An RNA of 177 nucleotides, treated with 2A3 and read out base by base. The reactions ran in a buffer of 150 mM KOAc, 10 mM MgCl2 and 150 mM bicine (pH 8.5), at 24 C. The data come from the RNA Mapping Database (RMDB), library OK1LIB.
RNA sequence: GGGAACGACUCGAGUAGAGUCGAAAAGCGUCCGGGACCGGUCAGCGCCGAGCGGAUCGCUGACGUGCUCGGAGUGGACGCGACAACGCUGACCGCAUAGCACCGUGGUGGUGGCUGCCGCUGGGCGGAGCCUGCCCUGCUUCGGCAGGGCAGGCUCAAAAGAAACAACAACAACAAC
Reactivity to 2A3 in 0.01 (KOAc 150mM, MgCl2 10mM, bicine 150mM(pH8.5), 24C), signal-to-noise 1, nucleotides 027 to 126: g050c040g030u010c000c000g050g050g020a150c100c000g000g010u030c030a030g000c010g000c080c020g090a020g060c080g010g040a180u060c040g000c120u000g030a080c020g140u190g040c070u150c020g040g000a040g020u220g010g000a050c010g010c030g020a040c020a090a000c010g000c010u000g020a000c020c010g040c050a170u210a030g040c030a000c040c000g080u040g010g040u130g030g010u000g030g080c040u070g010c000c070g000c060u140g020g080g000c000g000